The record gives the reactivity of an RNA of 177 nucleotides to DMS and 2A3. For 2A3, 1,658 sequencing reads were counted. The reactions ran in a buffer of 150 mM KOAc, 10 mM MgCl2 and 150 mM bicine (pH 8.5), at 24 C.

RNA sequence: GGGAACGACUCGAGUAGAGUCGAAAACAAGGACAAGCUCGGCAACCACGCAAACGCCUCGAGCGAGGUCGAAUACGACGGUGCCGUCGCGUGGCUGGUGGGCGAGGAGGGCCGCGGCGUGCCGACCCUCCUGCCCCGGGUUCGCCCGGGGCAGGAGAAAAGAAACAACAACAACAAC
Reactivity to DMS in 0.01 (KOAc 150mM, MgCl2 10mM, bicine 150mM(pH8.5), 24C), signal-to-noise 2, nucleotides 027 to 126: c060a150a130g000g000a110c050a080a110g030c020u020c000g000g000c060a040a070c020c000a070c060g010c090a070a120a230c280g020c020c000u000c000g010a180g020c120g000a100g020g000u020c040g020a140a100u000a070c080g010a020c060g020g020u010g020c060c020g000u000c060g030c000g030u010g000g020c030u000g000g000u000g000g000g010c010g030a080g000g010a050g010g010g040c010c010g000c030g020g010c060g020u000g000c080c020g020a030c080c030
Reactivity to 2A3 in 0.01 (KOAc 150mM, MgCl2 10mM, bicine 150mM(pH8.5), 24C), signal-to-noise 2, nucleotides 027 to 126: c040a040a090g150g020a040c020a000a040g010c010u000c060g010g060c030a010a110c020c000a080c000g060c060a120a080a100c060g010c060c010u050c050g170a150g090c100g000a030g050g070u160c020g010a090a130u250a100c060g000a010c040g040g120u170g070c080c020g020u030c010g010c020g040u020g000g040c010u150g100g170u080g010g020g000c030g020a020g020g030a020g010g070g030c000c030g060c030g020g020c110g000u030g080c010c000g030a050c040c000